Source information:
This 177-nucleotide RNA was probed chemically with 2A3 and DMS. The DMS profile rests on 5,092 reads. Source: RMDB library M2PK90, as collected in RNAgym. For 2A3, 7,904 sequencing reads were counted. Conditions: 150 mM KOAc, 10 mM MgCl2 and 150 mM bicine (pH 8.5), 24 C.
[RMDB]
RNA sequence: GGGAACGACUCGAGUAGAGUCGAAAAGUUGCCGACGAACCUUCCAACCUUCCAAACGUCGUUUACGACAACCUUCCAACCUUCCAAUCUACUCGAGAGGAGGAGGAGGAGGAGGAGGAGGAAUUAAUCUACUAACAGAAUUCGUUCUGUUAGUAGAAAAAGAAACAACAACAACAAC
Reactivity to 2A3 in 0.01 (KOAc 150mM, MgCl2 10mM, bicine 150mM(pH8.5), 24C), signal-to-noise 5, nucleotides 027 to 126: g040u030u050g120c030c000g020a070c050g020a030a090c000c020u050u000c020c020a090a090c040c010u080u010c020c000a100a120a080c080g010u020c010g010u050u150u100a080c050g020a010c030a050a040c020c000u050u020c020c020a080a080c020c010u060u020c000c000a050a060u000c010u060a070c040u040c070g040a020g020a040g070g030a030g000g020a050g040g030a060g000g020a060g020g040a030g020g050a040g010g030a030g020g010a010a020u100u080a050a030
Reactivity to DMS in 0.01 (KOAc 150mM, MgCl2 10mM, bicine 150mM(pH8.5), 24C), signal-to-noise 5, nucleotides 027 to 126: g010u000u000g020c040c010g020a120c120g010a120a130c050c020u000u020c020c020a080a130c060c030u000u010c010c090a050a100a160c170g000u000c010g010u010u000u010a080c050g010a040c020a090a140c030c010u000u000c010c020a090a090c070c030u010u000c010c020a110a210u000c000u010a030c100u000c070g010a020g000a270g010g010a080g000g000a140g000g000a110g010g010a130g010g010a100g000g000a170g000g010a120g000g000a300a080u010u010a040a110